[RMDB]
RNA sequence: GGGAACGACUCGAGUAGAGUCGAAAAUAUCAACACCUCGCUGAUUCCUGCCCACCCGAAGGUCUCGAGGCGAGUGGGGUCGUCGAGGAAAGGCCGACAACGGUGGGAACCAUGAUACUGAUUAUGAUCUUACUAGUAUGUUCGCAUACUAGUAAGAAAAAGAAACAACAACAACAAC
Reactivity to 2A3 in 0.01 (KOAc 150mM, MgCl2 10mM, bicine 150mM(pH8.5), 24C), signal-to-noise 6, nucleotides 027 to 126: u190a040u060c020a020a050c010a020c040c010u020c010g010c010u020g010a060u050u030c000c010u020g040c000c000c010a010c000c010c010g030a050a020g030g010u010c010u010c020g020a020g000g000c010g000a010g020u050g000g010g010g040u020c000g000u000c010g010a170g050g000a020a020a010g010g000c020c010g030a050c050a120a020c040g020g010u000g000g010g010a000a000c020c010a050u090g040a040u130a170c070u100g120a120u080u170a090u220g090a050
Reactivity to DMS in 0.01 (KOAc 150mM, MgCl2 10mM, bicine 150mM(pH8.5), 24C), signal-to-noise 7, nucleotides 027 to 126: u010a070u010c050a040a160c180a070c020c020u000c030g020c040u000g010a090u000u000c000c010u010g020c010c010c010a040c020c020c050g010a120a170g010g010u000c010u000c020g000a080g030g010c010g000a090g010u000g000g000g000g020u000c010g020u000c010g010a110g020g010a050a080a040g000g000c010c010g010a140c140a100a130c240g000g020u000g000g000g000a090a080c100c050a040u010g020a070u010a100c160u010g010a080u000u000a050u010g000a210